[RMDB]
RNA sequence: GGGAACGACUCGAGUAGAGUCGAAAAACACUGACCUGUACGCAGGUCAGUGACAUGUUAAUUGUACUUCAUCAGGUGCUCUGGUGAUUUUGAUACCCGGUGCCUGUUGGAGCGCAAUUCAUAUGAAUUCCCUCUAGCCGUUCGCGGCUAGAGGGAAAAAAGAAACAACAACAACAAC
Reactivity to 2A3 in 0.01 (KOAc 150mM, MgCl2 10mM, bicine 150mM(pH8.5), 24C), signal-to-noise 1, nucleotides 027 to 126: a010c000a030c030u010g000a010c000c000u020g000u030a060c300g010c090a000g010g020u000c000a000g000u000g000a080c000a000u000g000u020u000a000a000u000u000g000u010a000c000u000u000c000a000u000c000a000g000g000u000g000c000u000c050u300g140g050u080g180a210u010u170u000u170g070a120u120a050c000c000c000g000g030u000g020c010c000u020g000u000u000g000g000a000g000c030g060c010a040a000u050u000c000a010u030a000u020g070a120a080